[RMDB]
RNA sequence: GGGAACGACUCGAGUAGAGUCGAAAAGAUAUGGACUACCCACCAUGUUCCAGGAGGGCAAUCGGAAACGAUUGCCUACCCACCCUGGGACAUGAGGUCCUAAGUCAGCCCCGACUUCGGUCGGGAAGCUCAACAUUCAGUUCGCUGAAUGUUGAGCAAAAGAAACAACAACAACAAC
Reactivity to 2A3 in 0.01 (KOAc 150mM, MgCl2 10mM, bicine 150mM(pH8.5), 24C), signal-to-noise 1, nucleotides 027 to 126: g030a040u130a060u130g000g020a000c050u160a210c010c000c020a000c010c000a010u010g000u020u000c020c000a010g000g000a010g070g000g000c020a000a010u000c020g050g030a090a010a120c030g000a010u000u000g050c010c010u000a030c020c020c000a030c020c000c010u000g000g000g010a000c000a000u000g000a000g000g020u000c010c000u010a290a040g150u040c040a040g090c000c010c000c030g010a020c000u090u100c300g080g010u010c000g000g020g000a000a030
Reactivity to DMS in 0.01 (KOAc 150mM, MgCl2 10mM, bicine 150mM(pH8.5), 24C), signal-to-noise 2, nucleotides 027 to 126: g000a070u000a270u000g000g010a020c000u000a080c020c040c010a300c100c000a010u010g020u000u010c000c000a000g000g000a070g000g000g030c020a000a020u000c000g000g010a100a100a070c000g050a000u000u000g010c040c000u000a010c050c060c080a300c030c000c030u010g010g000g010a000c020a000u000g000a070g010g010u000c000c000u000a070a060g000u000c090a050g000c140c000c020c020g000a010c000u000u000c150g000g000u000c020g000g030g020a000a030
Description:
This 177-nucleotide RNA was probed chemically with 2A3 and DMS. It was measured as part of the RMDB library TTRDEL. The 2A3 profile rests on 3,034 reads. The reactions ran in a buffer of 150 mM KOAc, 10 mM MgCl2 and 150 mM bicine (pH 8.5), at 24 C. For DMS, 1,196 sequencing reads were counted.